[RMDB]
The record gives the reactivity of an RNA of 177 nucleotides to 2A3 and DMS. The reactions ran in a buffer of 150 mM KOAc, 10 mM MgCl2 and 150 mM bicine (pH 8.5), at 24 C. For 2A3, 4,671 sequencing reads were counted. DMS adducts were read by reverse transcription with MarathonRT. For DMS, 4,657 sequencing reads were counted.
RNA sequence: GGGAACGACUCGAGUAGAGUCGAAAAGAUAUGGACCGUAUACAGCGAUAAGACUCGGUCGGAAACGACCGGGAGGUCUUUUGACGCUGAUACGGUCCUAAGUCAAACAUCGUCUUCGGACGAUGAACAUACCUAGUUGCUUCGGCAACUAGGUAUGAAAAGAAACAACAACAACAAC
Reactivity to 2A3 in 0.01 (KOAc 150mM, MgCl2 10mM, bicine 150mM(pH8.5), 24C), signal-to-noise 2, nucleotides 027 to 126: g000a000u040a030u060g000g000a020c000c010g050u030a040u120a110c000a000g020c030g160a160u090a300a000g000a000c010u010c050g020g000u000c010g000g040a030a030a000c000g020a000c060c090g040g110g030a100g030g040u010c000u020u100u060u200g300a140c060g000c010u000g000a000u000a010c000g000g010u000c000c000u000a000a010g020u010c000a000a000a030c010a010u020c000g000u000c000u070u030c180g150g000a010c010g010a010u000g000a030a010
Reactivity to DMS in 0.01 (KOAc 150mM, MgCl2 10mM, bicine 150mM(pH8.5), 24C), signal-to-noise 3, nucleotides 027 to 126: g010a020u000a100u010g000g000a000c010c010g010u000a000u010a160c020a010g020c010g040a250u000a010a040g000a040c000u010c010g010g000u020c000g010g000a030a060a090c000g010a010c000c000g000g000g010a050g000g000u000c010u000u010u000u010g030a160c080g010c000u000g000a040u000a010c000g000g000u000c000c000u000a000a080g010u000c020a180a150a300c010a000u000c000g000u000c000u000u000c250g030g010a010c010g000a020u000g000a100a270